[RMDB]
RNA sequence: GGGAACGACUCGAGUAGAGUCGAAAAGGAACUUGCAUUACUAGAUUGAGAACACCUAGUCUAGGGUCAGUGUUUGUCACCCAGGGAUGGCUAUACGUCAAACAAUUGGAUAUGAUCCUGGACAGGAGAUCUUCUACAAAUUCGUUUGUAGAAGAUCAAAAGAAACAACAACAACAAC
Reactivity to 2A3 in 0.01 (KOAc 150mM, MgCl2 10mM, bicine 150mM(pH8.5), 24C), signal-to-noise 9, nucleotides 027 to 126: g060g010a040a060c040u060u100g020c050a090u130u080a110c060u090a070g160a270u060u200g070a070g030a110a030c030a050c040c010u020a060g000u000c000u010a000g000g000g000u010c010a020g040u010g040u090u100u080g070u050c030a050c010c000c020a020g080g060g010a070u040g000g000c010u070a080u050a300c130g010u000c000a010a060a050c020a040a150u180u160g090g000a050u080a050u300g010a000u000c000c000u010g000g000a000c000a000g000g010a030
Reactivity to DMS in 0.01 (KOAc 150mM, MgCl2 10mM, bicine 150mM(pH8.5), 24C), signal-to-noise 9, nucleotides 027 to 126: g010g010a070a080c070u000u000g010c080a070u000u000a090c080u000a060g010a130u000u000g010a120g010a120a130c220a130c010c000u000a090g010u000c000u000a010g000g010g000u000c010a050g010u000g000u000u000u000g000u000c030a110c250c010c010a030g010g020g010a160u000g000g010c140u000a100u010a070c180g000u000c010a010a020a040c030a050a140u010u010g020g010a150u000a110u000g000a020u000c010c000u000g000g000a010c020a030g000g010a130

This 177-nucleotide RNA was probed chemically with 2A3 and DMS. 2A3 adducts were read by reverse transcription with SuperScript II with manganese.